[RMDB]
RNA sequence: GGGAACGACUCGAGUAGAGUCGAAAAGAUCUGCGCCGAUCCGAAACGCUAGCAAACAGCCCGCAUCAUGUCGUCUCCUAACUUCGACGGGGUGAAAUACUGAGCUUAUGCGAGUAAGCCUGUUAGCAAUAGAUCAGAACGUUCGCGUUCUGAUCAACAAUAUACCUGUGUUCGCACAGGUAUAUUGAAAAGAAACAACAACAACAAC
Reactivity to DMS in 0.01 (KOAc 150mM, MgCl2 10mM, bicine 150mM(pH8.5), 24C), signal-to-noise 5, nucleotides 027 to 156: g000a060u000c030u000g020c050g040c040c040g000a100u000c030c020g010a090a080a090c070g000c010u000a020g020c030a070a050a130c080a200g010c000c010c010g040c040a180u020c080a050u000g010u000c010g000u000c020u000c100c040u000a090a110c130u000u000c030g020a060c010g000g010g010g010u010g000a110a070a120u000a080c050u000g010a100g010c010u000u010a100u000g010c150g020a140g010u010a050a100g010c020c040u030g010u000u000a050g010c040a070a140u000a070g000a020u000c000a010g010a010a020c000g030u000u010c300g040c030g030u000u000c000u000g000a010u000c000a020a070
Reactivity to 2A3 in 0.01 (KOAc 150mM, MgCl2 10mM, bicine 150mM(pH8.5), 24C), signal-to-noise 9, nucleotides 027 to 156: g030a040u020c020u080g020c040g030c050c040g030a060u030c030c040g050a070a050a030c060g010c040u040a010g030c040a060a040a100c020a060g030c010c010c020g020c020a070u070c020a020u130g090u180c010g020u000c020u050c040c040u110a160a190c070u140u100c070g040a040c020g010g000g020g000u050g030a060a050a010u170a060c050u040g010a010g010c000u040u030a010u070g060c040g020a040g060u030a020a000g010c000c020u050g010u060u050a020g000c020a060a120u050a170g000a000u000c000a000g000a000a000c010g000u050u040c190g000c000g110u000u000c020u000g000a000u000c000a000a000
Source: RMDB library M2RFPK, as collected in RNAgym. The record gives the reactivity of an RNA of 207 nucleotides to DMS and 2A3. For DMS, 16,192 sequencing reads were counted. Conditions: 150 mM KOAc, 10 mM MgCl2 and 150 mM bicine (pH 8.5), 24 C.